[RMDB]
RNA sequence: GGGAACGACUCGAGUAGAGUCGAAAAGAUGGGCCUUCUGGUAAUGUACCUGGCCGCCCAGGAGGUCCUGAGGAAGAGAUAGACGGCCAGGGUCCGAUCAUACGGUAUAAACCUGCUCAACGUAUGAUCGGUUAUGACAAUUAAGAAGAGCAGGUUACCCAGUACUAUCGUUCGCGAUAGUACUGGGAAAAGAAACAACAACAACAAC
Reactivity to 2A3 in 0.01 (KOAc 150mM, MgCl2 10mM, bicine 150mM(pH8.5), 24C), signal-to-noise 2, nucleotides 027 to 156: g110a030u130g000g000g020c000c000u000u020c000u000g000g000u110a180a160u180g090u140a130c000c000u020g000g000c000c000g070c000c000c000a000g000g000a000g000g010u000c000c010u070g000a110g070g060a100a120g010a000g030a030u040a110g030a010c010g000g000c000c010a000g010g000g000u010c000c010g000a000u000c000a000u000a010c010g000g010u160a020u060a100a140a010c000c000u020g040c010u020c010a000a000c000g000u000a000u000g000a000u000c000g010g000u000u020a000u010g000a010c040a030a130u180u110a070a170g040a060a000g000a030g000c010a010g000g020u000u010a000